[RMDB]
RNA sequence: GGGAACGACUCGAGUAGAGUCGAAAAAUGCUAUUGCUUUAACGCUGAGGGUGAUGCAUCCUGGUCUUCUACUAUGAUCUUCUCUCUUCACCCCGUCGAGUGUGACGAGGAGUGUUCUGAAGUAGAGUAAGGGUGUCGUUCGCGACACCCAAAAGAAACAACAACAACAAC
Reactivity to 2A3 in 0.01 (KOAc 150mM, MgCl2 10mM, bicine 150mM(pH8.5), 24C), signal-to-noise 4, nucleotides 027 to 129: a030u130g060c070u060a040u160u090g030c020u090u100u100a130a010c120g000c060u030g030a050g040g030g000u030g020a060u100g000c000a030u010c010c010u040g060g040u020c010u090u000c000u000a010c000u000a020u120g030a050u020c000u160u020c070u000c000u000c000u030u000c000a020c000c090c020c010g240u100c060g050a150g070u000g000u050g000a030c050g000a040g030g000a030g020u110g030u050u050c010u020g060a030a010g000u060a000g000a010g020u030a000a000
Reactivity to DMS in 0.01 (KOAc 150mM, MgCl2 10mM, bicine 150mM(pH8.5), 24C), signal-to-noise 2, nucleotides 027 to 129: a000u000g020c010u020a060u010u050g020c030u030u030u050a080a020c120g020c050u000g040a140g010g010g050u020g020a080u010g030c000a010u010c010c030u010g010g060u010c060u050u020c030u000a030c070u020a130u010g000a030u000c160u020u000c020u040c030u010c130u000u030c020a080c020c010c020c060g020u080c060g000a110g070u000g040u060g020a000c170g000a030g030g000a090g030u000g010u050u040c010u020g000a000a040g020u060a000g000a080g010u030a070a050

About this RNA:
Chemical mapping of a 170-nucleotide RNA with 2A3 and DMS. For DMS the reverse transcriptase was MarathonRT. The DMS profile rests on 9,050 reads. The 2A3 profile rests on 6,817 reads. 2A3 adducts were read by reverse transcription with SuperScript II with manganese. The RNA was probed in 150 mM KOAc, 10 mM MgCl2 and 150 mM bicine (pH 8.5) at 24 C. It was measured as part of the RMDB library 15KLIB.